[RMDB]
RNA sequence: GGGAACGACUCGAGUAGAGUCGAAAAUCCAAGGGGUUCGCCCCUUGGAAAAUAAGGGAAACCGUGCAUUCCGGUCGACUCCGGAGAGCCAAAGUCAAAUAAAAACCGUUGGGUUCGCCCAACGGAACUAAUGUACUUUCUUCGGAAAGUACAUUAGAAAAGAAACAACAACAACAAC
Reactivity to DMS in 0.01 (KOAc 150mM, MgCl2 10mM, bicine 150mM(pH8.5), 24C), signal-to-noise 3, nucleotides 027 to 126: u000c000c000a000a010g020g000g030g020u000u020c300g030c020c000c000c000u030u000g020g000a010a030a070a080u010a080a130g020g000g000a100a080a080c060c010g010u020g020c040a130u000u000c020c000g000g010u000c130g010a060c050u010c000c000g000g010a060g010a080g020c120c110a030a040a050g000u000c050a120a100a080u010a070a070a120a150a120c010c000g000u000u000g020g010g010u010u000c230g010c000c010c010a000a000c000g000g010a010a040
Reactivity to 2A3 in 0.01 (KOAc 150mM, MgCl2 10mM, bicine 150mM(pH8.5), 24C), signal-to-noise 2, nucleotides 027 to 126: u000c000c000a010a000g050g030g010g010u030u090c150g080c000c000c000c000u000u010g000g000a020a020a000a010u050a010a020g070g000g040a070a030a030c060c030g000u040g010c030a130u140u000c000c020g010g010u050c050g050a040c050u010c240c020g010g000a060g030a010g050c000c020a050a030a020g030u090c060a080a060a110u110a080a120a030a040a070c010c010g010u010u010g000g020g000u030u050c190g070c010c000c000a000a000c000g000g000a000a000